[RMDB]
Record summary: This 177-nucleotide RNA was probed chemically with DMS.
RNA sequence: GGGAACGACUCGAGUAGAGUCGAAAAGAAUAUGCACCGCCACCACCACCUCCACCAGUUCAACAAGCCCAUGUCUAUCACUCCUCUCAUAAUCAAGAACUGGACUCUGAUUAUUACCCACCACGACGAAUUUGGAUAACUUCGGUUAUCCAAAUUCAAAAGAAACAACAACAACAAC
Reactivity to DMS in 0.01 (KOAc 150mM, MgCl2 10mM, bicine 150mM(pH8.5), 24C), signal-to-noise 2, nucleotides 027 to 126: g010a150a130u020a100u000g020c090a030c020c070g000c050c010a040c020c020a070c040c060a090c030c010u010c090c060a110c060c030a060g030u000u000c110a070a050c100a070a130g000c030c030c010a050u000g010u010c040u000a060u010c070a080c030u000c020c020u000c060u010c040a000u010a020a070u000c040a020a090g000a050a060c020u000g000g020a100c050u000c040u020g000a080u000u020a080u000u000a130c030c030c000a070c160c090a020c160g010a130c160
The DMS profile rests on 1,027 reads. The RNA was probed in 150 mM KOAc, 10 mM MgCl2 and 150 mM bicine (pH 8.5) at 24 C. It was measured as part of the RMDB library OK2TRN.